The data come from the RNA Mapping Database (RMDB), library OK3TST. The record gives the reactivity of an RNA of 207 nucleotides to 2A3. The RNA was probed in 150 mM KOAc, 10 mM MgCl2 and 150 mM bicine (pH 8.5) at 24 C.
RNA sequence: GGGAACGACUCGAGUAGAGUCGAAAAAGUAAGCCAUAGGCUGGGUAACUUGCCAGAUAUCCCACAGCUGGAGCCAUCAUAUGAACCCAAGCAACCCAGCUGCAGCCUGGACCUAGCCACUCCAAGGGCUCUGUGCCUCAGAAAAGAGGCCCAAAGAAUCAUGGGUGGUAUUCGUACCACCCAUGAUAAAAGAAACAACAACAACAAC
Reactivity to 2A3 in 0.01 (KOAc 150mM, MgCl2 10mM, bicine 150mM(pH8.5), 24C), signal-to-noise 1, nucleotides 027 to 156: a000g130u060a030a000g010c030c010a060u110a170g000g050c010u030g000g000g000u140a230a220c110u190u150g000c020c010a010g000a020u010a060u070c070c060c030a000c020a000g000c000u000g020g010a030g000c150c040a060u050c040a040u080a100u300g160a040a000c000c000c030a000a060g070c000a050a110c030c070c000a040g000c000u020g000c000a060g040c010c000u000g000g010a000c000c000u000a000g000c000c040a100c020u110c120c060a150a120g000g020g000c020u050c040u030g040u100g000c020c000u030c030a020g300a090a190a030a010g010a030g010g090c000c040c050a100a070a030g020a030